[RMDB]
Notes
Chemical mapping of a 207-nucleotide RNA with DMS and 2A3. The 2A3 profile rests on 661 reads. The RNA was probed in 150 mM KOAc, 10 mM MgCl2 and 150 mM bicine (pH 8.5) at 24 C. Values cover nucleotides 27 to 156. DMS (dimethyl sulfate) methylates the pairing face of unpaired adenines and cytosines. Source: RMDB library OK3TST, as collected in RNAgym. For DMS the reverse transcriptase was MarathonRT.
RNA sequence: GGGAACGACUCGAGUAGAGUCGAAAAGGUCGCCAAAUUCCAGGUUUUGGAAGAGGCAAGCCAGAAGCGAAAACUGACCCAAAGCGAACAGCAGAUGCUGGCGAACAAAAAGAAUAUCCUGUACAUGGCGGAACAAAAGGCCAUCGUGGGAGAUCAGAUUGAUACGAGGAUUCGUCCUCGUAUCAAUAAAAGAAACAACAACAACAAC
Reactivity to DMS in 0.01 (KOAc 150mM, MgCl2 10mM, bicine 150mM(pH8.5), 24C), signal-to-noise 1, nucleotides 027 to 156: g000g080u000c060g020c010c000a080a130a200u010u000c010c000a090g040g030u010u000u000u000g000g000a040a030g000a300g060g000c000a090a270g000c000c010a100g000a210a130g020c040g000a150a080a080a080c100u000g000a140c060c060c000a110a060a270g050c010g000a010a250c050a110g000c040a120g000a130u000g000c050u000g000g010c000g000a080a240c090a060a030a170a190a110g030a180a200u000a150u000c000c000u000g000u000a040c010a030u000g030g030c000g050g020a110a080c110a090a200a090a300g000g000c030c000a000u000c020g000u000g030g030g000a090g000a150u000c040a040g000
Reactivity to 2A3 in 0.01 (KOAc 150mM, MgCl2 10mM, bicine 150mM(pH8.5), 24C), signal-to-noise 2, nucleotides 027 to 156: g000g000u140c030g000c000c000a150a200a100u010u020c010c000a050g300g080u090u140u300u100g000g010a040a060g000a010g000g000c010a010a000g020c040c000a070g030a000a010g070c120g100a020a060a020a090c090u150g050a080c000c010c040a000a110a000g080c020g030a110a050c010a010g030c040a090g080a220u280g060c000u010g040g000c020g030a020a020c060a050a070a020a000a000g060a090a040u170a040u190c010c020u100g020u090a010c010a000u000g020g010c040g030g110a150a070c100a070a170a030a120g120g000c000c000a020u050c150g030u070g010g000g000a000g000a020u090c020a030g080